The data come from the RNA Mapping Database (RMDB), library TTRDEL. An RNA of 177 nucleotides, treated with DMS and 2A3 and read out base by base. The RNA was probed in 150 mM KOAc, 10 mM MgCl2 and 150 mM bicine (pH 8.5) at 24 C. For DMS, 5,907 sequencing reads were counted.

RNA sequence: GGGAACGACUCGAGUAGAGUCGAAAAGAUAUGGACCUUUAAUGGGAGCACCUCGGAAACGAGCGUGCAUCGAUCAUUACUGAGGUCCUAAGUCAAAGAUCCUAUAGGGUUCGCCCUAUAGGAUCAAGGGAAUUAGUAUGUUCGCAUACUAAUUCCCAAAAGAAACAACAACAACAAC
Reactivity to DMS in 0.01 (KOAc 150mM, MgCl2 10mM, bicine 150mM(pH8.5), 24C), signal-to-noise 3, nucleotides 027 to 126: g000a020u000a170u000g000g010a000c010c000u000u000u000a010a010u010g010g010g000a060g000c010a010c000c010u010c000g010g010a060a050a070c000g010a010g000c300g020u010g020c010a080u000c080g020a110u010c000a010u000u000a020c300u010g010a010g010g000u000c000c000u000a000a110g000u000c020a100a110a150g010a010u000c000c000u010a000u000a000g000g000g010u000u010c250g000c010c000c000u000a010u000a010g000g010a000u000c000a020a050
Reactivity to 2A3 in 0.01 (KOAc 150mM, MgCl2 10mM, bicine 150mM(pH8.5), 24C), signal-to-noise 4, nucleotides 027 to 126: g020a000u050a020u080g000g000a000c010c000u020u030u070a020a010u040g130g240g000a010g000c000a000c010c000u000c010g010g030a020a040a030c010g010a010g020c200g020u010g000c020a070u070c020g040a140u100c010a000u000u050a060c150u140g100a020g020g010u000c000c000u000a060a000g020u020c030a060a090a150g000a000u000c000c000u000a000u000a010g030g000g050u040u050c300g150c010c000c000u000a000u000a000g000g000a000u000c000a000a010